[RMDB]
RNA sequence: GGGAACGACUCGAGUAGAGUCGAAAAGGUAUCCACUUCGGUGGAUACCAAAGGCGAUCCCAGCAUCAGGGAACAACAACAAUAGUUGCAUCCCUAACGCCAAAAUUCCGGAUUUCGAUCCGGAAAAUCAUACCAAAGAGUUCGCUCUUUGGUAUGAAAAAGAAACAACAACAACAAC
Reactivity to DMS in 0.01 (KOAc 150mM, MgCl2 10mM, bicine 150mM(pH8.5), 24C), signal-to-noise 4, nucleotides 027 to 126: g020g010u000a000u010c000c000a000c010u000u000c220g020g020u000g000g010a010u000a000c010c000a010a040a060g020g020c030g010a130u010c000c000c010a200g020c200a080u010c190a020g010g000g010a100a160c010a020a020c000a080a120c210a150a110u010a160g000u000u000g020c090a110u000c000c010c000u000a060a070c030g010c000c010a110a070a100a170u000u000c000c000g010g000a020u000u010u020c140g000a040u000c000c000g010g000a010a010a030a090
Reactivity to 2A3 in 0.01 (KOAc 150mM, MgCl2 10mM, bicine 150mM(pH8.5), 24C), signal-to-noise 4, nucleotides 027 to 126: g020g000u010a000u000c000c000a000c020u050u070c190g110g000u010g010g000a010u000a000c000c000a010a030a020g010g010c010g020a080u020c000c020c000a010g080c020a090u190c080a010g020g000g010a020a050c010a010a000c010a040a000c030a100a240u110a280g010u010u010g020c050a110u040c000c000c020u000a050a010c030g010c000c020a050a090a030a030u070u010c010c000g000g020a010u030u040u130c150g050a020u050c010c000g000g000a010a000a000a000
Annotation:
An RNA of 177 nucleotides, treated with DMS and 2A3 and read out base by base. Conditions: 150 mM KOAc, 10 mM MgCl2 and 150 mM bicine (pH 8.5), 24 C. The DMS profile rests on 3,679 reads. The data come from the RNA Mapping Database (RMDB), library M2PK50.